[RMDB]
RNA sequence: GGGAACGACUCGAGUAGAGUCGAAAAAGCCUCUGUUAACUGACACAGCAGUAGAACUCCAAGGUGUUGAUCCUUGGAUUCAUGUUUCUCAACUUCAGAGACACACAUCACUCCUUCCUGACCACUGGGCAUCCAUCCCACCAGGAGCUCCUAAUCACGCUCAUGAGUCAUUCGUGACUCAUGAGCGAAAAGAAACAACAACAACAAC
Reactivity to 2A3 in 0.01 (KOAc 150mM, MgCl2 10mM, bicine 150mM(pH8.5), 24C), signal-to-noise 2, nucleotides 027 to 156: a000g060c010c000u050c000u020g050u040u090a130a000c060u100g070a010c020a000c030a050g010c010a020g000u190a030g030a030a080c110u000c000c000a040a000g000g050u090g010u200u300g100a180u110c000c000u000u000g000g000a000u040u020c010a010u000g010u000u030u030c050u020c020a080a190c040u250u180c070a030g000a010g000a030c000a020c020a010c020a090u120c020a060c000u070c060c010u170u030c030c000u070g000a110c040c020a080c100u020g000g000g000c010a000u020c050c020a070u070c000c000c020a000c000c000a050g030g000a010g040c000u130c080c000u130a090a020u150c170a070